[RMDB]
RNA sequence: GGGAACGACUCGAGUAGAGUCGAAAAAGAUGAAAGACUUACAGGCCAUCAAGCAGGAGGUCAGCUCCUCUGCUCUUGGCAGCCCCCAGUUCAUGCAGACCCUCCGGCUGGCGGUACAACAGUUUGACAACCUCCGAAAAUUCGUUUUCGGAGGUUGAAAAGAAACAACAACAACAAC
Reactivity to DMS in 0.01 (KOAc 150mM, MgCl2 10mM, bicine 150mM(pH8.5), 24C), signal-to-noise 2, nucleotides 027 to 126: a080g010a130u020g010a010a140a110g010a070c070u020u000a090c240a190g000g030c020c040a020u010c110a100a020g030c070a020g040g000a030g000g030u000c130a150g020c050u000c040c040u000c010u000g000c050u000c040u020u010g000g060c010a130g000c060c020c010c010c090a100g000u020u000c140a020u020g030c020a070g000a050c060c000c020u000c020c010g000g060c020u010g010g000c130g000g000u000a050c090a020a090c150a020g000u040u000u000g010a300
Reactivity to 2A3 in 0.01 (KOAc 150mM, MgCl2 10mM, bicine 150mM(pH8.5), 24C), signal-to-noise 2, nucleotides 027 to 126: a000g100a000u300g020a020a100a030g110a000c070u090u110a020c060a050g170g000c040c000a020u000c050a020a020g030c000a020g060g080a060g000g080u280c050a060g010c010u060c020c020u010c070u000g000c000u000c080u050u050g040g000c000a050g010c000c000c000c000c000a000g000u050u080c050a010u190g070c060a000g030a030c010c010c030u060c000c010g130g000c060u040g010g000c020g000g000u010a000c010a100a000c010a080g040u000u000u160g000a020